An RNA of 177 nucleotides, treated with DMS and 2A3 and read out base by base. As a SHAPE reagent, 2A3 marks flexible, mostly unpaired nucleotides at the ribose 2'-OH.
[RMDB]
RNA sequence: GGGAACGACUCGAGUAGAGUCGAAAAGAAAGGGACCCCUGCCACGGGACGCAGCCAGUCGACCCCAGGCAUGUUUUUGCAUGCCGGACUGACCCCUACUGCGGGCAGGAGGGGUGGUCCCGAAAGAGCCUGGAUUAUAGUUCGCUAUAAUCCAGGCAAAAGAAACAACAACAACAAC
Reactivity to DMS in 0.01 (KOAc 150mM, MgCl2 10mM, bicine 150mM(pH8.5), 24C), signal-to-noise 2, nucleotides 027 to 126: g000a120a100a160g020g000g000a030c000c030c300c010u020g010c000c040a150c080g020g000g020a140c150g010c050a000g020c060c130a030g020u000c010g000a200c090c000c020c060a270g000g000c000a000u000g000u000u010u010u000u010g000c020a010u000g000c010c000g000g020a020c020u000g010a060c010c010c040c020u010a130c020u010g000c100g010g020g020c000a030g010g000a080g000g010g020g020u000g000g000u000c000c000c000g000a050a070a130g000a140
Reactivity to 2A3 in 0.01 (KOAc 150mM, MgCl2 10mM, bicine 150mM(pH8.5), 24C), signal-to-noise 1, nucleotides 027 to 126: g060a050a010a030g020g000g020a020c000c000c000c050u010g030c030c000a110c100g140g020g030a020c070g000c020a000g000c060c020a020g000u010c010g120a250c000c000c000c000a000g010g000c000a000u000g090u030u230u120u160u300g020c010a000u000g040c000c000g010g000a000c020u000g020a010c000c000c020c000u030a090c030u030g040c060g180g030g060c040a000g020g020a000g000g000g060g020u000g000g000u000c000c000c000g010a010a010a000g060a010
About this RNA
DMS adducts were read by reverse transcription with MarathonRT.